[RMDB]
RNA sequence: GGGAACGACUCGAGUAGAGUCGAAAAUGCAUGUACACACACACACACACACACACACGCACACACACCACACAUACUAAGUCCUCACUUAACAUCAUGUAUAGGUUCUUGGAAACUGUGAUUUUAAGCAAAAUAACAUACAGCAGAUCCUCAAAAACUAUAAGCAAAACUUCGGUUUUGCUUAUAGAAAAGAAACAACAACAACAAC
Reactivity to DMS in 0.01 (KOAc 150mM, MgCl2 10mM, bicine 150mM(pH8.5), 24C), signal-to-noise 2, nucleotides 027 to 156: u010g030c030a070u000g010u000a030c030a050c050a050c020a070c020a070c050a050c180a070c000a030c000a020c050a040c020a040c020a060c050g010c030a080c070a060c050a050c000a040c040c010a010c040a040c020a030u000a050c020u000a070a100g000u000c030c010u020c070a060c050u000u000a040a060c030a050u010c050a050u010g000u010a100u010a070g020g010u000u000c040u020u010g020g000a080a040a100c020u000g000u020g010a050u010u000u000u000a040a080g020c070a030a020a040a090u000a030a060c040a090u000a050c030a030g000c020a070g000a010u000c030c000u000c040a050a050a110a110a140
Reactivity to 2A3 in 0.01 (KOAc 150mM, MgCl2 10mM, bicine 150mM(pH8.5), 24C), signal-to-noise 4, nucleotides 027 to 156: u090g030c020a030u030g030u080a040c040a010c000a000c010a020c010a010c000a000c000a010c000a000c000a000c000a000c000a010c010a030c040g040c030a040c000a000c000a000c000a010c030c000a030c010a010c000a040u120a060c010u060a040a050g050u050c010c020u040c020a070c030u040u060a050a030c020a060u100c010a080u090g070u100a070u050a090g070g040u070u020c030u080u110g060g010a080a050a020c030u060g020u040g060a060u000u070u030u070a020a000g010c010a020a010a070a050u070a060a030c020a030u100a030c000a010g010c000a010g020a090u050c010c040u110c080a010a200a020a020a020